[RMDB]
Conditions: 150 mM KOAc, 10 mM MgCl2 and 150 mM bicine (pH 8.5), 24 C. An RNA of 170 nucleotides, treated with 2A3 and DMS and read out base by base. It was measured as part of the RMDB library 15KLIB. For DMS the reverse transcriptase was MarathonRT. For DMS, 15,064 sequencing reads were counted. The 2A3 profile rests on 5,955 reads.

RNA sequence: GGGAACGACUCGAGUAGAGUCGAAAAAAGAUGUUAUUUAUGCUUCCACUAGCUUACUUUAGUGAUUCAAAACUCGGCACCACAGAGGUUAAAGUGAGUGCUUUGAAAACAGCCGGCGUUGUGACAGAUACUGAAUUCUUCGGAAUUCAGAAAAGAAACAACAACAACAAC
Reactivity to 2A3 in 0.01 (KOAc 150mM, MgCl2 10mM, bicine 150mM(pH8.5), 24C), signal-to-noise 5, nucleotides 027 to 129: a000a020g170a010u100g020u090u060a120u110u170u060a050u070g050c000u100u020c080c010a030c030u000a010g000c020u060u150a060c010u140u180u070a030g020u030g100a030u080u080c060a040a010a070a090c030u020c040g000g010c000a000c000c000a050c000a000g070a070g140g150u160u180a110a050a040g000u010g090a040g010u050g060c000u020u050u060g110a060a060a020a020c010a000g050c000c000g030g000c020g000u000u010g030u020g020a020c020a020g050a070u030a150
Reactivity to DMS in 0.01 (KOAc 150mM, MgCl2 10mM, bicine 150mM(pH8.5), 24C), signal-to-noise 5, nucleotides 027 to 129: a040a060g020a140u050g010u000u000a090u030u030u000a090u060g010c000u000u000c090c060a070c050u020a090g020c130u000u000a040c070u010u010u000a030g030u030g020a100u000u050c080a050a060a080a050c120u030c060g000g050c000a070c060c030a080c080a060g030a000g030g020u000u000a040a100a090g000u000g030a080g000u010g020c040u000u000u000g010a110a050a060a040c030a130g040c010c040g000g000c100g060u000u070g020u040g030a140c020a070g030a120u060a110